[RMDB]
RNA sequence: GGGAACGACUCGAGUAGAGUCGAAAACCUCUCGGCUGAGGUGCUUCCCUCCCGCGGCCAGCUGCUUCUUCUUGUUCUCCAGGGCCUUCCUUCUUCUGUGGUCCCGCCUCUCCCGGUCGGUGAACCCUCCCCCAACGUUUCGACGUUGGGAAAAGAAACAACAACAACAAC
Reactivity to DMS in 0.01 (KOAc 150mM, MgCl2 10mM, bicine 150mM(pH8.5), 24C), signal-to-noise 3, nucleotides 027 to 129: c000c000u020c000u030c130g050g050c080u040g000a060g030g040u020g030c140u020u010c010c010c020u030c000c000c000g040c070g030g020c040c040a030g000c070u030g000c010u000u030c010u040u020c040u020u010g030u040u020c000u050c050c090a110g000g000g000c040c020u030u010c040c020u010u040c000u040u030c060u000g040u000g000g000u010c010c050c040g000c010c000u000c040u020c020c010c000g000g040u000c000g000g000u050g040a120a130c000c000c000u000c030c030
Reactivity to 2A3 in 0.01 (KOAc 150mM, MgCl2 10mM, bicine 150mM(pH8.5), 24C), signal-to-noise 9, nucleotides 027 to 129: c010c000u010c020u030c050g200g010c130u100g020a020g030g020u030g030c060u040u040c010c000c010u020c020c020c010g020c030g020g010c020c010a040g010c050u060g020c000u030u040c000u080u010c010u050u160g030u070u020c030u000c030c040a060g020g040g010c000c000u040u030c020c000u040u070c020u080u030c030u060g130u060g060g010u040c010c000c000g010c010c000u040c010u020c010c010c000g010g020u040c030g020g020u060g040a030a020c010c000c000u040c010c010